[RMDB]
RNA sequence: GGGAACGACUCGAGUAGAGUCGAAAAAUGGGGGACCUGAUGCCUGAGCGAUUCCAAUACUGGCCUUGAGAUCCCACUGGGAGAUGGUGAAGAGGAAAUUGGACGUCCAACAAGGACUCACUAAUGGGCCACUAGUUUUAUUCGUAAAACUAGUGGCAAAAGAAACAACAACAACAAC
Reactivity to 2A3 in 0.01 (KOAc 150mM, MgCl2 10mM, bicine 150mM(pH8.5), 24C), signal-to-noise 1, nucleotides 027 to 126: a000u070g010g000g000g000g000a010c000c020u030g000a030u090g050c000c050u010g010a020g010c040g100a070u120u000c020c000a000a010u100a090c040u100g050g000c040c010u100u040g090a110g010a100u060c000c000c010a060c030u060g020g060g010a110g000a040u080g030g050u070g030a080a060g030a040g050g000a080a040a100u010u030g000g030a000c040g000u020c000c030a040a020c020a140a180g000g060a000c010u010c070a040c010u070a110a100u080g070g180
Reactivity to DMS in 0.01 (KOAc 150mM, MgCl2 10mM, bicine 150mM(pH8.5), 24C), signal-to-noise 3, nucleotides 027 to 126: a110u000g000g010g000g010g000a070c060c020u010g010a130u000g000c050c020u000g000a100g040c130g040a140u000u000c030c010a080a080u010a110c100u000g010g010c020c030u000u000g010a120g000a130u000c020c000c010a100c180u000g010g010g000a050g010a090u000g010g000u000g000a050a070g010a040g000g010a040a090a110u020u000g000g010a080c150g010u000c030c040a040a080c190a130a140g000g000a050c010u010c040a040c080u020a060a100u010g020g030